[RMDB]
RNA sequence: GGGAACGACUCGAGUAGAGUCGAAAAUUGUUUCUUCUUGUUCUCGAGGGCCUUCCUUCUUCGGUGAUCCUUCCUCUCCCUGUCGGUGAAGUCUCCCGCACGGGUCCUCUUCCUAGGUCCGGAGUCGUUAGACAAAGCUUCGGCUUUGUCAAAAGAAACAACAACAACAAC
Reactivity to 2A3 in 0.01 (KOAc 150mM, MgCl2 10mM, bicine 150mM(pH8.5), 24C), signal-to-noise 9, nucleotides 027 to 129: u060u040g040u030u010u000c000u030u010c010u040u080g070u110u010c030u010c020g010a060g010g040g050c000c010u050u040c030c000u040u060c010u050u050c030g060g030u070g050a090u060c010c000u050u040c000c000u020c010u030c010c010c000u040g090u100c040g030g020u060g040a050a020g040u020c030u000c040c000c000g020c020a040c030g030g010g010u040c000c000u020c000u030u020c000c010u030a040g030g000u000c010c000g010g000a010g020u020c030g020u030u060a030
Reactivity to DMS in 0.01 (KOAc 150mM, MgCl2 10mM, bicine 150mM(pH8.5), 24C), signal-to-noise 7, nucleotides 027 to 129: u050u000g010u060u000u010c020u030u020c070u010u020g000u030u010c050u020c010g020a100g010g020g020c100c070u020u020c020c020u000u000c040u020u020c040g010g000u030g010a070u000c020c020u000u000c020c020u000c020u020c030c030c020u030g020u030c020g030g040u030g000a060a060g010u020c040u000c030c030c040g000c110a080c060g040g000g000u000c010c000u020c040u010u010c020c030u000a060g040g040u050c040c000g020g000a000g010u000c030g030u030u050a130